RNA sequence: GGGAACGACUCGAGUAGAGUCGAAAACAGUUUUUUCCUAACCAGACAGGGACUUGGUACAGAAUCUCAUAUUCUAAUUAUGCCUAGGAGCAGCCUCUCCCCACCACUCACAGUGUUUAGCAUGUGACAGGAAUCGAUUAAGGCAUGAGUGAUUAAACGUAAGACCAAUUUUCGAAUUGGUCUUACGAAAAGAAACAACAACAACAAC
Reactivity to 2A3 in 0.01 (KOAc 150mM, MgCl2 10mM, bicine 150mM(pH8.5), 24C), signal-to-noise 2, nucleotides 027 to 156: c060a020g030u040u060u000u010u110u030c030c010u050a130a070c020c050a070g050a180c060a080g000g060g000a030c010u000u040g000g000u020a010c010a030g040a070a140u030c120u040c140a040u100a150u240u000c000u060a130a160u100u050a050u180g080c000c030u040a050g010g010a020g020c020a020g010c000c050u000c010u030c000c030c000c000a030c020c040a000c000u030c000a060c000a060g010u020g030u100u000u090a020g030c010a010u050g030u000g070a010c030a050g010g010a000a030u010c010g010a000u080u060a040a000g030g000c000a010u060g000a010g030u060g040a030u090u210a030a040a050
Reactivity to DMS in 0.01 (KOAc 150mM, MgCl2 10mM, bicine 150mM(pH8.5), 24C), signal-to-noise 2, nucleotides 027 to 156: c050a190g000u000u000u000u000u000u000c010c010u040a160a200c090c040a200g000a140c060a170g000g020g020a030c080u000u000g010g000u010a060c030a090g010a110a070u010c070u000c040a130u000a140u000u000c030u000a050a120u020u000a080u000g030c010c020u000a060g040g000a100g040c090a050g020c060c020u010c050u000c000c000c000c040a090c080c030a070c040u010c030a090c020a060g040u010g010u010u000u000a080g050c060a010u010g020u010g010a080c050a090g030g020a020a080u000c030g000a090u000u000a040a030g010g000c030a130u000g000a060g040u010g020a190u010u000a050a100a110

Description: Chemical mapping of a 207-nucleotide RNA with 2A3 and DMS. For DMS, 2,892 sequencing reads were counted. For 2A3, 929 sequencing reads were counted. The data come from the RNA Mapping Database (RMDB), library OK3TST.